Overview: This 207-nucleotide RNA was probed chemically with 2A3.
[RMDB]
RNA sequence: GGGAACGACUCGAGUAGAGUCGAAAAGGUAAACUAGCUUUAAUUAUCGCUUCUAACAGCUGAUUCCAAAACUCUAUUGUUACUACACCAAAAUAAUGUCGAAAGAAAAUUUCUUUCUUAUUUUCUUUGAUAAGCGAAAUGACCAGCAACUUGAUGAGGUCAGUGAUUAUUUCGAUAAUCACUGACCAAAAGAAACAACAACAACAAC
Reactivity to 2A3 in 0.01 (KOAc 150mM, MgCl2 10mM, bicine 150mM(pH8.5), 24C), signal-to-noise 1, nucleotides 027 to 156: g030g050u090a100a030a140c030u010a040g030c030u120u150u170a120a010u130u040a150u180c050g050c110u090u130c010u100a130a050c000a060g000c000u110g050a030u180u150c010c000a060a060a060a060c180u160c030u050a100u030u060g080u050u000a020c010u040a030c000a010c000c060a060a140a050a000u120a150a040u120g090u120c000g060a010a020a010g050a040a090a070a070u060u140u070c040u060u140u000c000u030u100a070u040u040u000u020c000u040u020u030g040a050u120a100a030g010c000g020a000a040a040u050g000a000c020c050a040g130c000a000a080c010u090u060g030a080u010g090a180
It was measured as part of the RMDB library OK3TST. The reactions ran in a buffer of 150 mM KOAc, 10 mM MgCl2 and 150 mM bicine (pH 8.5), at 24 C.